The record gives the reactivity of an RNA of 177 nucleotides to DMS and 2A3.
Values cover nucleotides 27 to 126.
DMS adducts were read by reverse transcription with MarathonRT.

RNA sequence: GGGAACGACUCGAGUAGAGUCGAAAAACUACCGCCAGAGGUUAGCGGUCGCGAAGGUUGGGGAGCCUGAUGACCGGCCGAGAGCUAGUUGGACUGAGGUUUAAGGGAGCCUACAGUGAACGUUCUGCGUAAAGUAGGCUUUCGAGCCUACUUUACGAAAAGAAACAACAACAACAAC
Reactivity to DMS in 0.01 (KOAc 150mM, MgCl2 10mM, bicine 150mM(pH8.5), 24C), signal-to-noise 4, nucleotides 027 to 126: a090c050u010a100c050c040g030c070c060a070g040a140g000g010u000u010a080g020c020g020g010u000c010g020c030g000a060a030g010g010u000u000g020g010g050g060a120g010c030c010u000g010a070u030g020a160c300c020g000g010c020c020g010a080g000a020g000c040u000a080g010u010u010g010g000a070c030u010g000a060g010g000u000u000u010a110a090g030g020g020a060g010c010c010u010a090c060a060g000u000g030a060a060c120g020u020u000c010u000g010
Reactivity to 2A3 in 0.01 (KOAc 150mM, MgCl2 10mM, bicine 150mM(pH8.5), 24C), signal-to-noise 5, nucleotides 027 to 126: a000c040u080a080c020c010g070c030c020a080g040a050g130g020u050u050a020g030c010g020g010u010c000g010c010g050a040a010g050g040u120u060g060g020g010g060a020g020c000c010u110g060a220u040g010a040c010c000g010g010c000c010g060a070g000a010g020c020u050a020g070u050u050g060g020a010c010u020g020a020g030g070u010u050u100a080a060g060g010g000a010g000c000c000u070a140c010a020g010u030g090a060a010c040g020u020u000c020u050g030